[RMDB]
RNA sequence: GGGAACGACUCGAGUAGAGUCGAAAAGGGCUUGCCGAUCUGAAUGAGCAGUUUAAUUUCCUGAAGGAAGGGCAGCUAACCUACAUCGAAUCUUUGCGUAAAACCAAAGGCGAGACGGCAGCAGCAGAUGCGGCGACAAAACUGUUUGCUGAUACGAGAACUCCGUUAGAUUCGUCUAACGGAGUUCAAAAGAAACAACAACAACAAC
Reactivity to DMS in 0.01 (KOAc 150mM, MgCl2 10mM, bicine 150mM(pH8.5), 24C), signal-to-noise 2, nucleotides 027 to 156: g010g020g010c070u010u000g030c000c000g020a190u000c030u000g000a140a080u000g010a130g020c030a100g060u020u000u010a070a130u000u000u000c010c020u010g010a140a130g000g070a120a150g010g000g000c070a110g000c040u010a020a080c100c010u010a100c030a060u000c000g020a160a040u000c040u000u030u000g010c000g020u000a100a100a150a130c230c000a000a020a070g000g030c040g000a300g000a050c000g030g020c030a070g000c010a040g030c000a060g030a140u030g010c070g020g020c050g000a130c030a000a050a060a040c040u010g000u000u020u000g040c000u020g000a200u000a080c070g010a290
Reactivity to 2A3 in 0.01 (KOAc 150mM, MgCl2 10mM, bicine 150mM(pH8.5), 24C), signal-to-noise 3, nucleotides 027 to 156: g020g000g010c020u070u140g010c000c010g060a140u020c060u070g070a100a080u090g040a050g070c040a010g060u050u100u080a180a110u080u060u040c040c000u060g060a070a000g020g010a010a010g000g000g000c010a010g000c030u020a040a060c000c000u020a040c020a090u060c020g040a130a020u060c010u050u000u030g010c010g030u070a010a040a030a080c020c000a020a010a010g040g000c000g010a040g020a000c020g020g000c000a010g000c000a000g000c000a000g030a050u110g100c020g060g020c030g060a060c050a000a040a020a050c020u020g010u080u160u090g060c020u000g020a090u070a160c110g040a070